[RMDB]
RNA sequence: GGGAACGACUCGAGUAGAGUCGAAAAUGAAGGUGAGACUGUCUGCUGGUGGGAUGCUGGGCGAGUUGCUUCAUGUCCCUGAGCUGCUAUUUGCUAACUGUGAAGUGGGAUCCUGGUCCCUGACAGGGAUAGAGCAAGGGUUCGCCCUUGCUCUAUCAAAAGAAACAACAACAACAAC
Reactivity to 2A3 in 0.01 (KOAc 150mM, MgCl2 10mM, bicine 150mM(pH8.5), 24C), signal-to-noise 3, nucleotides 027 to 126: u070g020a060a020g080g010u060g030a070g000a040c030u030g030u080c040u050g020c020u060g020g060u060g040g090g040a070u140g020c050u050g010g030g030c020g010a060g030u040u070g060c010u020u040c030a020u060g050u000c020c000c000u030g040a020g000c000u040g020c030u120a140u210u130u130g000c020u030a130a090c020u060g020u020g140a120a080g060u110g040g000g000a010u020c020c070u120g090g030u040c030c010c030u020g030a020c020a010g100g020
Reactivity to DMS in 0.01 (KOAc 150mM, MgCl2 10mM, bicine 150mM(pH8.5), 24C), signal-to-noise 4, nucleotides 027 to 126: u010g010a060a070g000g030u000g010a110g010a090c040u010g010u000c030u000g020c050u000g020g020u000g030g010g000a060u000g010c060u000g020g010g010c030g010a070g010u000u000g010c040u000u000c030a060u000g010u000c000c010c010u010g020a110g000c040u000g000c060u010a100u010u000u000g010c040u010a110a100c060u000g020u010g010a080a080g010u010g000g000g000a070u000c040c070u010g010g000u000c010c010c000u000g000a100c070a060g000g000